This 207-nucleotide RNA was probed chemically with 2A3 and DMS. 2A3 is a SHAPE reagent: it acylates the 2'-hydroxyl of flexible nucleotides of all four kinds.
[RMDB]
RNA sequence: GGGAACGACUCGAGUAGAGUCGAAAAUCUUCUUUCGAGAAGACUAGUUGCGUACUACCUUAGACAUGAUCCACAAUAUACAACAGCUCCCAAAUAGGAGACAUGUAUUUUGCGGAUCAACAGCUAAGGUAUCGCUGUACAGUAGGUUCGCCUACAACUUUGCAUACCUAUUCGUAGGUAUGCAAAGAAAAGAAACAACAACAACAAC
Reactivity to 2A3 in 0.01 (KOAc 150mM, MgCl2 10mM, bicine 150mM(pH8.5), 24C), signal-to-noise 5, nucleotides 027 to 156: u000c000u030u000c000u030u080u170c300g090a070g000a020a000g010a020c050u070a090g210u200u260g040c010g010u030a130c050u000a010c020c000u040u020a030g040a140c080a140u090g010a000u000c000c000a000c000a010a000u020a000u010a030c000a080a020c050a150g040c010u070c030c030c000a190a270a110u300a110g020g010a000g030a060c030a060u050g000u010a000u000u030u000u000g000c010g000g000a000u000c000a000a000c010a000g040c000u000a010a010g000g000u000a010u020c000g000c020u000g120u120a110c080a110g000u020a010g020g050u040u080c210g090c130c000u050a010c010a070a070
Reactivity to DMS in 0.01 (KOAc 150mM, MgCl2 10mM, bicine 150mM(pH8.5), 24C), signal-to-noise 3, nucleotides 027 to 156: u000c020u010u010c000u000u000u000c230g020a050g020a030a030g020a030c020u000a120g030u000u000g010c000g000u000a160c090u000a020c000c010u000u000a040g020a070c060a300u000g000a040u000c000c000a020c000a020a030u000a020u000a020c010a040a080c060a230g020c000u000c010c010c010a020a170a210u010a080g000g000a030g000a030c080a300u000g010u000a010u010u010u000u000g060c010g000g000a020u000c000a010a040c070a120g020c010u000a000a020g030g010u000a000u010c070g020c030u000g000u000a090c100a120g010u010a040g000g020u000u000c290g030c060c000u000a020c010a060a160